[RMDB]
RNA sequence: GGGAACGACUCGAGUAGAGUCGAAAAAAACUUUUGUGACUUGCUGAAACGGGACUAAUCUCCUCACCGAGGCUAAGCAAGUAAAAUACGCCUCUCAUGUCCUUACCUGAGGGUGGUAAGGAAAUAACCUGCAACGCUUCCUUCGGGAAGCGUUGAACUUCAUACAAGGAUUCGUCCUUGUAUGAAGAAAAGAAACAACAACAACAAC
Reactivity to 2A3 in 0.01 (KOAc 150mM, MgCl2 10mM, bicine 150mM(pH8.5), 24C), signal-to-noise 4, nucleotides 027 to 156: a000a000a010c150u190u090u040u140g110u070g050a050c000u000u010g000c010u050g030a050a060a070c080g000g010g010a000c020u060a070a080u040c040u020c050c020u050c020a030c030c080g020a010g020g010c020u050a020a020g000c010a020a020g050u140a000a020a020a020u120a030c050g000c000c000u030c010u020c040a060u140g030u070c000c010u010u010a010c000c000u050g060a090g000g070g010u020g000g010u000a000a010g000g050a000a010a030u040a010a030c030c070u110g020c020a010a000c010g000c000u010u000c020c000u040u050c110g060g000g000a000a000g030c000g010u000u000g000a000a000
Reactivity to DMS in 0.01 (KOAc 150mM, MgCl2 10mM, bicine 150mM(pH8.5), 24C), signal-to-noise 1, nucleotides 027 to 156: a040a050a050c040u000u000u000u010g040u020g030a130c020u010u000g000c010u000g000a100a100a110c090g040g010g060a100c010u010a080a140u000c070u000c010c020u000c160a170c090c020g000a060g010g000c010u000a050a100g030c020a020a040g000u000a060a080a060a040u000a060c080g030c000c000u000c000u000c070a080u010g020u000c010c000u010u000a020c000c020u020g000a110g000g030g030u000g000g010u000a020a050g000g000a010a050a060u000a020a080c070c010u010g010c010a010a010c000g030c000u010u010c000c000u020u020c300g030g000g010a020a010g010c010g000u010u000g000a020a080